[RMDB]
The data come from the RNA Mapping Database (RMDB), library OK1LIB. Structure probing data (2A3 and DMS) for a 177-nucleotide construct. The DMS profile rests on 1,527 reads. The RNA was probed in 150 mM KOAc, 10 mM MgCl2 and 150 mM bicine (pH 8.5) at 24 C. For DMS the reverse transcriptase was MarathonRT. 2A3 adducts were read by reverse transcription with SuperScript II with manganese.
RNA sequence: GGGAACGACUCGAGUAGAGUCGAAAAAGUAUCGAGCGAAAAGCUUGAUACAAAUGCCAGGUAUGAGGCAAAACGUGAUACCAAAAAGGAUACGAAUAAAUAAAGUAUCCAACACUCGAAAGAGUGAGGAUUGUUGAAGGUUCGCCUUCAACAAUCCAAAAGAAACAACAACAACAAC
Reactivity to 2A3 in 0.01 (KOAc 150mM, MgCl2 10mM, bicine 150mM(pH8.5), 24C), signal-to-noise 3, nucleotides 027 to 126: a000g000u000a000u000c010g000a000g000c010g080a090a100a200a000g000c000u010u010g000a000u000a000c000a000a110a010u070g000c010c000a020g040g020u030a020u110g150a050g010g000c000a060a130a070a030c170g030u020g020a010u010a020c020c000a030a000a000a000a060g000g000a000u000a000c010g040a080a090u170a130a080a020u220a050a160a000g000u000a010u030c000c000a000a000c010a010c000u000c000g050a080a020a010g000a010g000u000g030a040
Reactivity to DMS in 0.01 (KOAc 150mM, MgCl2 10mM, bicine 150mM(pH8.5), 24C), signal-to-noise 1, nucleotides 027 to 126: a110g020u000a000u000c000g030a000g020c000g050a070a070a100a130g000c000u000u000g000a000u000a000c100a030a050a160u000g040c000c050a140g050g010u000a020u000g030a060g020g010c040a080a030a130a000c080g080u020g000a080u000a000c000c000a000a100a080a070a050g000g000a000u000a010c000g000a200a300u020a080a120a060u010a010a010a180g000u000a000u000c000c000a080a060c000a000c000u000c000g000a150a080a020g030a000g030u000g000a040